[RMDB]
RNA sequence: GGGAACGACUCGAGUAGAGUCGAAAACAUAGAACAAGGAUAACUUAUCUGGGUGCUUAGCUAUGCACUGACCAGCUGUGACACUGGGUAUCUCUAUGAGUCCACAAAAUGUGUGUGUUCAGUAAACACAUUCUGACACUCCCUAUGGGGCAAGCACCCAAACUGUUGCGUUCGCGCAACAGUUUGGAAAAGAAACAACAACAACAAC
Reactivity to 2A3 in 0.01 (KOAc 150mM, MgCl2 10mM, bicine 150mM(pH8.5), 24C), signal-to-noise 1, nucleotides 027 to 156: c020a010u050a020g100a050a020c040a040a020g090g040a080u030a130a100c030u100u100a030u180c050u090g060g000g000u070g000c030u110u070a130g000c090u020a020u170g060c010a030c030u090g140a220c060c060a000g030c030u140g020u080g100a050c000a000c030u000g190g020g000u050a100u070c030u030c000u010a050u080g020a000g090u090c020c020a170c190a150a140a090a050u080g040u040g000u050g000u010g040u030u150c060a040g010u200a020a160a030c050a000c000a060u080u000c020u000g000a010c020a010c120u090c040c000c000u110a110u150g000g040g000g000c050a080a020g080c050a050c000

This 207-nucleotide RNA was probed chemically with 2A3. The RNA was probed in 150 mM KOAc, 10 mM MgCl2 and 150 mM bicine (pH 8.5) at 24 C. For 2A3, 402 sequencing reads were counted. It was measured as part of the RMDB library OK3TST.